[RMDB]
RNA sequence: GGGAACGACUCGAGUAGAGUCGAAAAUCAGAUGAUGCAUGGUGAUGGCUCAGACCAUGCAUAACUAGCGGUUCGAGAUCAGCUGCCGGCACAAACCUCGAGCUCGAGUUAAGGUGCUUCUGUGCGCAUUAGUGCUAAAGUUCGCUUUAGCACUAAUAAAAGAAACAACAACAACAAC
Reactivity to DMS in 0.01 (KOAc 150mM, MgCl2 10mM, bicine 150mM(pH8.5), 24C), signal-to-noise 8, nucleotides 027 to 126: u030c060a090g000a090u020g010a040u000g020c000a010u000g000g010u010g000a100u020g010g010c020u000c040a150g000a040c050c000a010u000g000c010a020u000a020a070c060u010a070g010c090g000g020u010u010c060g010a060g000a070u010c080a100g010c040u010g000c020c040g000g020c060a060c110a040a100a100c130c010u000c020g010a140g020c060u020c030g010a040g020u000u010a070a100g010g010u000g010c020u000u000c050u020g010u010g010c090g010c120
Reactivity to 2A3 in 0.01 (KOAc 150mM, MgCl2 10mM, bicine 150mM(pH8.5), 24C), signal-to-noise 9, nucleotides 027 to 126: u140c030a030g080a160u200g010a010u010g020c000a000u010g010g020u050g040a140u110g110g030c030u020c050a010g030a050c000c000a000u010g000c000a000u000a010a020c030u040a020g060c020g070g040u060u060c060g040a030g020a170u060c040a010g020c030u040g020c020c000g020g000c030a010c030a050a060a020c010c000u020c020g030a060g070c050u040c040g020a010g010u040u120a100a040g050g020u040g010c000u080u040c040u080g090u080g010c040g000c050